[RMDB]
Source: RMDB library OK3TST, as collected in RNAgym. An RNA of 207 nucleotides, treated with DMS and 2A3 and read out base by base. Values cover nucleotides 27 to 156. The DMS profile rests on 5,348 reads. High 2A3 reactivity points to a flexible backbone, as in loops and unpaired stretches. For 2A3, 2,779 sequencing reads were counted. The RNA was probed in 150 mM KOAc, 10 mM MgCl2 and 150 mM bicine (pH 8.5) at 24 C. 2A3 adducts were read by reverse transcription with SuperScript II with manganese. For DMS the reverse transcriptase was MarathonRT.
RNA sequence: GGGAACGACUCGAGUAGAGUCGAAAAGAUAGUCUUUAGUCAAAAGUCCUCUUUGAUCUGAUAGCUAGUCCUCUCUGUUUAAAGUAUUGCUAGUAGACAGAAUUUAGCAUCAACUAUAAUCUCUAAUUCAAAGUAAAGGGUUUUACUUUACUUUGGAAAUCAUAAUGAUGUUCGCAUCAUUAUGAUUAAAAGAAACAACAACAACAAC
Reactivity to DMS in 0.01 (KOAc 150mM, MgCl2 10mM, bicine 150mM(pH8.5), 24C), signal-to-noise 2, nucleotides 027 to 156: g010a120u000a060g010u000c040u000u000u000a080g020u000c040a040a050a070a140g030u000c080c090u000c070u000u010u000g000a050u010c040u010g030a060u000a090g040c020u000a070g010u000c020c020u000c060u010c000u000g000u010u000u000a140a090a150g020u000a130u000u000g010c020u000a130g020u000a060g010a150c060a100g010a090a140u000u000u000a050g010c040a120u000c060a040a050c020u010a090u000a050a110u010c020u000c010u010a060a200u000u000c000a000a000a020g000u000a010a010a010g020g000g020u010u000u000u000a080c000u000u000u000a000c010u000u010u000g020g000a010
Reactivity to 2A3 in 0.01 (KOAc 150mM, MgCl2 10mM, bicine 150mM(pH8.5), 24C), signal-to-noise 4, nucleotides 027 to 156: g020a040u060a030g040u010c030u050u120u080a050g040u080c050a050a060a050a040g050u070c020c020u040c050u050u030u060g050a090u040c040u040g020a030u030a080g000c010u010a010g090u060c020c020u020c030u000c020u000g030u050u050u060a060a070a040g020u060a110u110u270g050c020u040a060g040u020a010g060a040c020a020g060a040a040u060u130u070a020g000c000a010u040c020a020a050c020u060a030u080a210a180u040c030u000c040u130a120a110u130u060c010a000a010a040g000u000a000a000a000g060g020g040u100u120u240u130a040c000u000u000u000a000c000u000u000u000g000g000a000